[RMDB]
RNA sequence: GGGAACGACUCGAGUAGAGUCGAAAACAAACAAAACACCUCCAAAGUCAAAAGGCGAAAGAAAACCGAGGAAAACUUCGGAAGAGUGUAUGCCAAAAAGACGGAGGAAACACUCUUCACAAACAAAACUAUUAAUUUAGUUCGCUAAAUUAAUAGUAAAAGAAACAACAACAACAAC
Reactivity to 2A3 in 0.01 (KOAc 150mM, MgCl2 10mM, bicine 150mM(pH8.5), 24C), signal-to-noise 7, nucleotides 027 to 126: c010a000a090a000c030a020a130a020a030c050a080c010c000u000c010c020a240a120a050g060u060c030a050a060a040a100g010g000c020g060a110a100a060g080a030a090a060a010c020c020g010a040g030g010a060a110a040a100c030u120u080c050g030g010a020a010g010a010g000u040g010u020a070u220g020c010c000a050a130a060a010a040g040a020c060g010g000a010g010g000a000a010a000c000a000c000u000c000u030u060c080a070c070a100a110a010c040a020a130a040
Reactivity to DMS in 0.01 (KOAc 150mM, MgCl2 10mM, bicine 150mM(pH8.5), 24C), signal-to-noise 3, nucleotides 027 to 126: c010a110a110a070c110a070a060a120a130c180a090c010c030u020c000c000a100a050a170g020u030c130a030a080a140a100g010g000c020g000a050a000a080g040a150a060a070a110c300c020g010a030g000g000a130a080a110a160c020u000u000c010g010g010a010a000g040a030g010u010g020u000a030u050g060c000c010a050a090a060a130a140g040a080c070g000g020a170g020g010a060a030a060c020a040c000u010c000u000u010c030a070c180a030a090a130c140a040a060a100

Structure probing data (2A3 and DMS) for a 177-nucleotide construct.
For DMS, 3,049 sequencing reads were counted.
2A3 is a SHAPE reagent: it acylates the 2'-hydroxyl of flexible nucleotides of all four kinds.
The 2A3 profile rests on 9,082 reads.
Conditions: 150 mM KOAc, 10 mM MgCl2 and 150 mM bicine (pH 8.5), 24 C.